[RMDB]
RNA sequence: GGGAACGACUCGAGUAGAGUCGAAAAGAGGGAUUGACGAACGUGUAAUUGCAGAGUAUAAUGUUACAGAAGUUAGUGUAGGCGAUUACAUUUUAUCCGGUGGAGAAAUACCAACACUUACCAUUCAGUACUAUCCUACCUUCGGGUAGGAUAGUACAAAAGAAACAACAACAACAAC
Reactivity to DMS in 0.01 (KOAc 150mM, MgCl2 10mM, bicine 150mM(pH8.5), 24C), signal-to-noise 3, nucleotides 027 to 126: g000a090g010g010g010a100u010u000g020a090c170g010a130a100c180g020u000g010u020a010a030u000u010g000c020a060g010a150g000u000a060u000a050a100u000g010u000u000a110c170a060g000a080a100g010u010u000a040g020u000g010u010a080g000g000c040g030a050u000u010a040c050a030u000u010u000u010a080u000c060c050g040g000u000g020g000a060g020a040a060a110u000a090c020c020a060a050c080a100c060u000u000a090c030c020a130u000u000c120a100
Reactivity to 2A3 in 0.01 (KOAc 150mM, MgCl2 10mM, bicine 150mM(pH8.5), 24C), signal-to-noise 2, nucleotides 027 to 126: g090a020g090g010g000a070u090u120g060a050c060g010a120a000c050g000u010g020u040a030a030u020u050g050c000a020g030a030g250u040a090u050a210a160u140g110u170u050a030c020a080g130a170a030g170u110u180a030g030u080g040u140a030g030g010c010g000a000u000u030a020c000a000u000u030u050u080a080u000c050c030g070g000u020g050g010a060g060a010a110a050u180a090c000c030a020a020c030a020c030u070u040a070c020c000a030u080u220c020a030
The record gives the reactivity of an RNA of 177 nucleotides to DMS and 2A3.
DMS adducts were read by reverse transcription with MarathonRT.
Conditions: 150 mM KOAc, 10 mM MgCl2 and 150 mM bicine (pH 8.5), 24 C.
It was measured as part of the RMDB library OK2TST.
Reactivities are given for positions 27 through 126.